[RMDB]
RNA sequence: GGGAACGACUCGAGUAGAGUCGAAAAGAUAUGGACCAAGAGCGAUAAGCUCCGGUCGGAAACGACCGUGAGCUUUUGACGCUCGACGUCCUAAGUCAAAACGGUUCAUCGUUCGCGAUGAACCGAAGACCCGUAUAAAGUUCGCUUUAUACGGGUCAAAAGAAACAACAACAACAAC
Reactivity to DMS in 0.01 (KOAc 150mM, MgCl2 10mM, bicine 150mM(pH8.5), 24C), signal-to-noise 2, nucleotides 027 to 126: g020a040u000a170u010g000g010a010c020c030a050a220g000a010g000c000g030a190u010a010a000g010c000u000c000c000g000g000u000c000g010g000a050a050a070c010g010a010c000c000g040u010g000a000g000c000u000u000u000u000g010a160c010g010c030u000c010g020a150c220g000u000c000c000u000a010a090g000u010c030a100a080a080a190c020g010g000u000u000c000a000u000c000g040u000u010c200g020c020g020a000u000g000a000a000c000c010g000a040a050
Reactivity to 2A3 in 0.01 (KOAc 150mM, MgCl2 10mM, bicine 150mM(pH8.5), 24C), signal-to-noise 1, nucleotides 027 to 126: g010a010u020a020u090g010g010a010c000c000a010a040g020a010g000c010g110a180u030a300a000g000c000u000c000c010g010g050u020c010g040g000a030a030a000c000g000a000c020c000g030u030g010a020g000c040u050u040u070u130g060a010c010g000c000u000c010g010a000c010g000u000c000c000u000a030a000g060u020c030a000a040a000a220c020g010g010u000u030c000a000u000c000g040u120u070c230g020c010g160a000u010g020a000a000c000c000g010a000a000